[RMDB]
RNA sequence: GGGAACGACUCGAGUAGAGUCGAAAACUAUGCAAACAUAAACACACACAACAUAAUGGAAAAACGACUAUCUCUUCGACUGCUUCUGUUAUCGCAUUUCGUGCGAGGAUAAAGGUCGUUCGGAGUGGUAGACAAGGGAUUUCGAUCCCUUGUCUACAAAAGAAACAACAACAACAAC
Reactivity to DMS in 0.01 (KOAc 150mM, MgCl2 10mM, bicine 150mM(pH8.5), 24C), signal-to-noise 3, nucleotides 027 to 126: c070u000a040u020g030c140a090a090a100c100a070u000a030a050a060c140a040c100a040c050a080c040a090a020c130a050u020a060a040u010g010g000a020a060a000a110a060c120g000a090c070u000a070u020c020u000c000u000u000c000g000a030c020u000g000c030u000u000c050u000g010u010u030a090u000c010g020c000a020u020u030u010c210g010u010g010c030g010a040g000g010a030u010a020a040a060g000g020u000c090g000u030u000c000g000g010a060g040u010g030
Reactivity to 2A3 in 0.01 (KOAc 150mM, MgCl2 10mM, bicine 150mM(pH8.5), 24C), signal-to-noise 7, nucleotides 027 to 126: c040u050a030u210g060c080a020a120a050c030a110u180a090a140a020c050a000c000a010c000a000c010a050a090c030a160u140a160a100u140g130g050a050a080a000a030a000c030g060a020c050u050a060u130c020u010c000u060u010c000g010a010c010u030g040c010u070u060c020u040g060u080u070a070u070c000g010c020a030u060u180u180c130g030u050g000c010g010a010g000g010a010u050a070a080a010g040g000u010c000g030u060u000c010g000g020a050g020u060g040